Source: RMDB library OK2TRN, as collected in RNAgym. Chemical mapping of a 177-nucleotide RNA with DMS and 2A3. Reactivities are given for positions 27 through 126. Conditions: 150 mM KOAc, 10 mM MgCl2 and 150 mM bicine (pH 8.5), 24 C. The DMS profile rests on 2,972 reads.
RNA sequence: GGGAACGACUCGAGUAGAGUCGAAAAUGGAUGGAGGGAAGUGGCAGGGGAUGCUUGAGUCAUUAGGAUUUGGUUUAUUUAGCAGCAGUGCUUUGAAGCUGGAGCUAUACUCAGCUUUUCUCUGGCAUCCAUAAAUGAGCUUCGGCUCAUUUAUGGAAAAAGAAACAACAACAACAAC
Reactivity to DMS in 0.01 (KOAc 150mM, MgCl2 10mM, bicine 150mM(pH8.5), 24C), signal-to-noise 2, nucleotides 027 to 126: u000g020g000a070u010g020g000a110g010g020g000a080a070g020u000g010g040c070a050g010g010g010g010a030u000g000c030u000u010g010a040g000u000c160a070u010u010a040g000g010a120u000u010u010g010g010u000u010u000a070u020u000u000a050g020c020a020g000c160a080g010u010g010c030u000u000u000g000a050a070g010c000u000g010g010a030g010c050u020a050u010a140c030u000c020a040g000c030u000u000u000u000c050u000c020u000g020g010c080a150
Reactivity to 2A3 in 0.01 (KOAc 150mM, MgCl2 10mM, bicine 150mM(pH8.5), 24C), signal-to-noise 2, nucleotides 027 to 126: u100g020g050a030u050g000g040a060g070g020g020a040a110g050u050g020g020c060a030g050g000g040g010a010u060g010c000u020u130g030a050g050u070c080a070u070u090a030g110g020a130u080u030u060g030g030u080u030u060a200u060u150u060a030g020c000a000g000c020a030g030u030g030c000u080u080u090g050a010a010g000c000u020g040g020a010g000c000u040a020u000a140c020u010c040a010g000c000u060u070u020u010c030u010c000u000g050g000c040a050